[RMDB]
RNA sequence: GGGAACGACUCGAGUAGAGUCGAAAAAGAUGGGCUUACCUACGGGAAUCCCUGGGUCCCCCUGAUGUCCAGUCCCUCCCCCGUCCGAGAGAAGGGAGACUCCGGAACUCCUGCCAUUUGAGGGACGCGAUAGAUAACAGUUCGCUGUUAUCUAUCGAAAAGAAACAACAACAACAAC
Reactivity to DMS in 0.01 (KOAc 150mM, MgCl2 10mM, bicine 150mM(pH8.5), 24C), signal-to-noise 4, nucleotides 027 to 126: a070g010a110u000g010g000g000c120u000u000a060c040c010u000a070c220g020g010g010a160a110u010c030c010c020u010g010g000g000u000c040c080c010c020c050u000g000a080u010g010u000c020c050a100g000u000c000c010c010u000c000c010c000c010c020g000u000c020c020g000a160g010a080g010a120a160g000g000g010a050g000a070c040u000c040c060g010g000a100a100c020u000c030c010u010g010c220c100a120u000u000u000g010a130g020g000g010a030c060g000
Reactivity to 2A3 in 0.01 (KOAc 150mM, MgCl2 10mM, bicine 150mM(pH8.5), 24C), signal-to-noise 2, nucleotides 027 to 126: a000g080a040u060g000g020g010c020u020u090a090c010c020u020a030c100g040g000g050a130a200u110c010c000c020u010g050g030g010u030c040c010c000c000c000u060g040a060u030g070u050c040c030a020g030u020c000c000c000u000c000c000c020c000c000g000u020c010c000g070a090g000a000g000a100a040g000g050g000a030g010a000c020u020c070c000g000g030a030a030c000u020c000c020u010g020c040c010a070u080u070u070g020a050g000g060g010a010c000g000

The record gives the reactivity of an RNA of 177 nucleotides to DMS and 2A3. The RNA was probed in 150 mM KOAc, 10 mM MgCl2 and 150 mM bicine (pH 8.5) at 24 C. DMS adducts were read by reverse transcription with MarathonRT. For 2A3, 2,478 sequencing reads were counted.